[RMDB]
RNA sequence: GGGAACGACUCGAGUAGAGUCGAAAAACUCCGAAGUUCGCUUCGGAGUAAAAUGGGCCCGAAGUCGCACAUGAAAGGGUCAAGUCGCGAUAAAUAAAAUAUAAAUCGAGAGCUUCGGCUCUCGAAACACAUUCAUAUCUUUCGAGAUAUGAAUGUGAAAAGAAACAACAACAACAAC
Reactivity to DMS in 0.01 (KOAc 150mM, MgCl2 10mM, bicine 150mM(pH8.5), 24C), signal-to-noise 3, nucleotides 027 to 126: a030c000u000c010c000g000a010a020g000u010u020c230g010c010u000u010c000g000g010a000g010u000a000a020a030a050u010g020g000g000c010c020c010g020a150a120g020u000c020g000c020a020c110a070u000g000a050a160a140g010g030g000u000c010a050a050g010u000c150g030c020g000a040u000a070a080a090u020a040a060a080a090u010a110u010a040a080a130u000c000g000a010g000a030g020c010u000u010c240g020g020c000u010c000u000c000g010a000a050a120
Reactivity to 2A3 in 0.01 (KOAc 150mM, MgCl2 10mM, bicine 150mM(pH8.5), 24C), signal-to-noise 4, nucleotides 027 to 126: a030c000u000c010c010g010a000a000g010u040u160c190g050c120u000u000c000g000g000a000g000u010a000a000a000a000u010g010g040g020c000c020c000g030a090a010g050u030c010g010c020a010c010a070u080g080a110a110a090g180g030g060u040c010a010a010g040u070c080g000c010g060a000u080a070a150a000u140a020a050a080a020u260a050u070a040a110a050u040c000g000a000g000a000g000c010u060u060c210g100g000c000u000c000u000c000g000a000a000a000

Record summary: Source: RMDB library M2PK50, as collected in RNAgym. The record gives the reactivity of an RNA of 177 nucleotides to DMS and 2A3. DMS (dimethyl sulfate) methylates the pairing face of unpaired adenines and cytosines. Reactivities are given for positions 27 through 126. For 2A3, 4,599 sequencing reads were counted. The reactions ran in a buffer of 150 mM KOAc, 10 mM MgCl2 and 150 mM bicine (pH 8.5), at 24 C.